[RMDB]
RNA sequence: GGGAACGACUCGAGUAGAGUCGAAAAAGCGACGGCGUCAGCCGCUUCGGUCGAUUCGAGCCGAAUGGUCGACGGCUGCGGAACCGACCGCAAAACUGGGGCAAAAGGUUCACCGCGGGUGUAAGCCCGUAACAUCGUGCUUCGGCACGAUGUUACGAAAAGAAACAACAACAACAAC
Reactivity to DMS in 0.01 (KOAc 150mM, MgCl2 10mM, bicine 150mM(pH8.5), 24C), signal-to-noise 2, nucleotides 027 to 126: a120g000c010g020a120c080g010g030c010g010u010c110a120g030c000c020g000c080u000u010c010g020g010u000c010g020a050u000u010c020g010a150g000c070c010g000a050a040u010g020g000u000c040g020a090c000g000g000c000u000g000c000g000g010a060a050c020c010g000a040c020c010g020c200a040a050a110a090c090u000g020g010g000g000c100a060a060a110a110g010g000u010u000c050a070c080c050g000c100g010g000g020u020g020u010a120a130g010c020c010
Reactivity to 2A3 in 0.01 (KOAc 150mM, MgCl2 10mM, bicine 150mM(pH8.5), 24C), signal-to-noise 2, nucleotides 027 to 126: a020g040c040g020a050c060g070g030c050g170u120c050a020g020c030c030g000c040u060u040c000g000g020u010c020g040a060u000u080c040g020a050g040c030c030g060a030a040u070g030g020u020c010g020a030c000g020g020c040u300g300c070g050g000a040a000c010c000g040a050c060c000g000c040a070a070a000a020c040u060g040g000g010g000c000a010a020a040a060g060g000u070u030c050a020c060c040g030c040g030g040g010u040g010u060a060a030g050c020c020